The record gives the reactivity of an RNA of 207 nucleotides to 2A3. The 2A3 profile rests on 1,679 reads. Source: RMDB library M2RFPK, as collected in RNAgym. The RNA was probed in 150 mM KOAc, 10 mM MgCl2 and 150 mM bicine (pH 8.5) at 24 C.
[RMDB]
RNA sequence: GGGAACGACUCGAGUAGAGUCGAAAAAGAUCCACGCUACGGCGUAGAUCACACGUUCAUCCCUAUUGGGACGGAAGUAGGCAUAGUGCCGAAGGAACGCAUUAGUCAUGCGCUACGGCGCAUGACACACAUCAGAGUCACUUCGGUGACUCUGAAACCAUUGUCAGGGGUUCGCCCCUGACAAUGGAAAAGAAACAACAACAACAAC
Reactivity to 2A3 in 0.01 (KOAc 150mM, MgCl2 10mM, bicine 150mM(pH8.5), 24C), signal-to-noise 3, nucleotides 027 to 156: a000g000a000u010c000c000a010c010g000c000u000a050c250g120g010c000g000u000a000g000a020u000c010a020c010a000c080g000u020u010c010a010u010c010c000c000u040a280u150u300g000g000g010a000c010g020g010a010a030g020u030a010g020g000c030a060u100a300g140u200g130c000c000g000a000a000g050g020a010a000c000g000c010a060u080u170a030g000u000c000a000u010g000c000g030c000u000a040c240g060g010c000g000c000a000u000g000a000c000a000c010a000c000a080u060c000a000g010a000g000u000c000a020c010u030u150c290g060g000u010g000a000c000u000c000u000g000a000a010a000
2A3 adducts were read by reverse transcription with SuperScript II with manganese.